Structure probing data (DMS and 2A3) for a 177-nucleotide construct. The reactions ran in a buffer of 150 mM KOAc, 10 mM MgCl2 and 150 mM bicine (pH 8.5), at 24 C.

RNA sequence: GGGAACGACUCGAGUAGAGUCGAAAAGAUAUGGAUAUUACCCGCUGAUGACCUCGGAAACGAGCAAGGCGAGGUACUGUAUCCUAAGUCAAACCAUUCGGUCUUGGUUCGCCAAGACCGAAUGGAAGUUUAGACAGUCGUUCGCGACUGUCUAAACAAAAGAAACAACAACAACAAC
Reactivity to DMS in 0.01 (KOAc 150mM, MgCl2 10mM, bicine 150mM(pH8.5), 24C), signal-to-noise 2, nucleotides 027 to 126: g000a070u020a270u000g000g000a010u000a010u000u000a000c010c000c000g060c000u000g010a130u000g000a090c300c020u000c010g000g010a110a040a220c000g010a040g010c030a140a150g010g010c000g000a090g010g000u000a010c300u020g000u000a010u000c000c000u000a050a170g020u000c020a100a100a080c020c000a010u000u000c000g010g000u000c020u010u010g000g010u010u010c180g010c000c000a010a000g000a000c000c000g000a000a000u000g020g000a000a040
Reactivity to 2A3 in 0.01 (KOAc 150mM, MgCl2 10mM, bicine 150mM(pH8.5), 24C), signal-to-noise 2, nucleotides 027 to 126: g070a020u100a060u150g010g000a010u000a000u060u050a030c000c000c000g000c020u040g000a300u230g040a100c030c000u010c000g000g010a040a080a060c000g000a010g010c030a090a160g030g030c040g100a260g010g010u020a060c050u090g020u020a010u000c000c000u050a100a030g080u030c050a050a080a140c020c010a010u000u030c010g000g000u000c030u020u010g110g000u060u170c270g030c120c010a000a020g020a000c020c010g020a000a010u000g000g000a010a010
Source information: For DMS, 1,370 sequencing reads were counted. 2A3 adducts were read by reverse transcription with SuperScript II with manganese.